Chemical mapping of a 177-nucleotide RNA with 2A3 and DMS. The reactions ran in a buffer of 150 mM KOAc, 10 mM MgCl2 and 150 mM bicine (pH 8.5), at 24 C. 2A3 adducts were read by reverse transcription with SuperScript II with manganese.

RNA sequence: GGGAACGACUCGAGUAGAGUCGAAAAAUGAGGCGUUUCCCAUGUACCUCGUCAGGCUUAUCCGUAACAGAAUGGAGGAGAUGAACGCAUGGCGUUAAUCAGCUGCUUCACCGGCCCUCAGGGGCUGGGCUGGUGCCUAUUUCGAUAGGCACCAGCCAAAAGAAACAACAACAACAAC
Reactivity to 2A3 in 0.01 (KOAc 150mM, MgCl2 10mM, bicine 150mM(pH8.5), 24C), signal-to-noise 4, nucleotides 027 to 126: a000u240g010a010g000g030c010g000u000u070u060c050c010c000a010u140g060u130a120c020c000u020c000g010u010c010a020g040g000c000u020u080a070u100c040c030g050u070a080a090c030a130g230a210a110u180g030g030a000g020g050a090g000a010u150g040a040a000c020g020c050a080u200g030g050c030g000u010u030a050a020u100c030a010g040c000u100g010c000u080u030c020a040c070c030g000g000c000c010c000u060c070a150g040g010g010g000c010u030g020
Reactivity to DMS in 0.01 (KOAc 150mM, MgCl2 10mM, bicine 150mM(pH8.5), 24C), signal-to-noise 1, nucleotides 027 to 126: a120u040g000a010g000g000c000g010u000u000u000c000c000c060a080u010g100u030a090c030c020u070c010g090u010c000a060g000g040c010u010u000a090u020c030c030g010u010a090a000c190a100g010a100a020u020g030g000a000g000g050a150g000a000u000g000a050a020c000g040c040a120u020g000g000c000g000u010u010a000a140u030c020a130g090c070u000g000c020u000u040c060a160c110c010g000g010c000c020c000u000c160a030g000g010g040g040c000u060g010